[RMDB]
RNA sequence: GGGAACGACUCGAGUAGAGUCGAAAAUGCAUUGAUAAUAUUAUUCAUACAAAAGCGGGUGUUCAAGUUCGACUUGAUUGUGCAGAGAUCAUUCGACAACAAGGGCGCAAUGAAGGUGUAGGUAAAGCGUAAGAACCGGUUUCGACCGGUUCUUACGAAAAGAAACAACAACAACAAC
Reactivity to 2A3 in 0.01 (KOAc 150mM, MgCl2 10mM, bicine 150mM(pH8.5), 24C), signal-to-noise 2, nucleotides 027 to 126: u120g020c060a020u080u070g110a000u220a260a040u090a030u210u090a030u060u180c060a050u110a240c110a010a160a000a050g030c100g000g060g020u050g050u000u040c110a180a020g000u080u040c040g040a080c050u040u050g050a010u150u030g040u060g090c010a000g090a030g010a200u000c000a030u090u130c010g010a000c010a070a020c000a030a040g000g000g040c000g060c070a000a060u010g010a070a010g110g060u020g020u040a000g040g020u040a020a050a020g000
Reactivity to DMS in 0.01 (KOAc 150mM, MgCl2 10mM, bicine 150mM(pH8.5), 24C), signal-to-noise 2, nucleotides 027 to 126: u030g000c070a070u030u040g030a070u010a030a030u010a110u060u000a020u020u000c050a100u000a220c170a090a050a150a060g010c010g000g010g000u010g000u000u000c120a100a080g030u040u020c020g000a030c020u000u000g000a030u010u000g020u020g050c150a080g000a090g000a020u020c060a150u000u000c060g020a030c170a060a040c140a080a010g000g020g000c020g030c060a070a080u000g000a010a100g000g030u000g010u000a000g000g000u010a060a030a010g010
An RNA of 177 nucleotides, treated with 2A3 and DMS and read out base by base. Source: RMDB library OK1LIB, as collected in RNAgym. 2A3 adducts were read by reverse transcription with SuperScript II with manganese. Values cover nucleotides 27 to 126. In probing experiments dimethyl sulfate is read out at A N1 and C N3, which are open when not base-paired.